RNA sequence: GGGAACGACUCGAGUAGAGUCGAAAAAGUUAGCUUCGCUAUGGUGCAACUCUUUAAGGCAAUAACGAACUAAUUCUAAGCAAGUAAUGGAGAAAUGCCAGGGUCACUAUCUAGCCAUAAUAGUGCUGUAAGUGACUUAGAUUCGUCUAAGUCACAAGUAAGAUAGAUGGUUCGCCAUCUAUCUUACAAAAGAAACAACAACAACAAC
Reactivity to DMS in 0.01 (KOAc 150mM, MgCl2 10mM, bicine 150mM(pH8.5), 24C), signal-to-noise 4, nucleotides 027 to 156: a060g010u000u000a020g030c060u000u000c030g040c030u000a030u000g000g010u010g040c040a080a130c110u000c110u000u000u000a090a100g020g020c020a100a040u000a020a040c040g010a030a060c010u000a030a040u000u000c070u000a110a130g010c060a070a090g010u000a070a080u000g020g020a130g010a080a070a090u000g010c020c010a070g000g030g020u000c030a040c030u000a070u000c040u010a100g010c050c060a090u010a060a080u000a060g010u000g020c020u000g010u000a070a120g030u000g000a030c000u010u000a000g000a070u000u010c300g000u010c000u000a010a020g000u000c000a010c010a020a170
Reactivity to 2A3 in 0.01 (KOAc 150mM, MgCl2 10mM, bicine 150mM(pH8.5), 24C), signal-to-noise 9, nucleotides 027 to 156: a000g040u030u020a020g010c110u090u080c030g020c040u040a020u090g080g050u080g070c070a090a140c040u080c040u110u200u210a120a040g050g000c020a060a060u080a090a030c060g020a020a000c030u030a030a050u090u040c040u130a070a050g040c040a060a020g050u130a070a110u130g060g020a060g040a070a120a020u070g010c030c020a020g020g010g000u050c010a000c030u020a040u100c040u040a020g020c000c010a040u050a140a050u040a130g070u050g030c040u030g040u130a180a090g000u010g000a000c000u000u000a000g000a000u020u040c140g020u000c150u000a000a000g000u000c000a000c000a010a020